[RMDB]
RNA sequence: GGGAACGACUCGAGUAGAGUCGAAAAUCCUUUUUCGUUCGCGAAAAAGGAAAAAAACCUUUGUGCAUAUGCAAGGAGGGCAUUCAUCCCAUUGGGAUGAUGUUUCUGAUGACCAUAUGCACUCUGGUAAAAACCUCUAACCUUCGGGUUAGAGGAAGAGUAGAGUUAGAUUCGUCUAACUCUACUCAAAAGAAACAACAACAACAAC
Reactivity to 2A3 in 0.01 (KOAc 150mM, MgCl2 10mM, bicine 150mM(pH8.5), 24C), signal-to-noise 7, nucleotides 027 to 156: u010c000c000u020u000u000u000u010c010g010u020u040c200g010c050g100a010a000a000a000a010g090g000a130a030a010a000a010a010a010c020c000u010u000u000g000u000g000c000a000u000a000u000g010c010a040a110g050g020a020g010g080g020c020a010u170u230c000a000u100c000c010c090a210u270u300g010g000g000a000u000g000a000u000g020u000u130u110c020u040g180a300u070g040a050c040c000a000u000a000u000g000c000a000c000u000c000u000g000g000u070a100a050a020a060a040c000c000u000c000u000a000a000c000c000u020u100c300g090g000g000u000u000a000g000a000g000g010a020a020
Reactivity to DMS in 0.01 (KOAc 150mM, MgCl2 10mM, bicine 150mM(pH8.5), 24C), signal-to-noise 3, nucleotides 027 to 156: u010c000c000u000u000u000u000u000c000g020u000u020c300g070c030g010a000a000a000a020a020g010g010a000a000a030a090a060a040a030c010c000u000u000u000g030u000g040c000a030u000a020u000g010c040a060a190g010g010a030g010g000g030c010a040u000u010c010a010u000c000c010c000a300u000u000g050g000g000a050u010g020a010u000g010u000u000u010c000u000g010a240u000g010a300c300c000a020u000a020u000g000c000a010c000u010c040u010g000g020u000a040a040a080a140a100c000c000u020c000u010a020a000c000c030u010u000c300g060g030g020u000u000a010g010a000g030g000a000a030
The record gives the reactivity of an RNA of 207 nucleotides to 2A3 and DMS. For DMS the reverse transcriptase was MarathonRT. The RNA was probed in 150 mM KOAc, 10 mM MgCl2 and 150 mM bicine (pH 8.5) at 24 C. 2A3 adducts were read by reverse transcription with SuperScript II with manganese.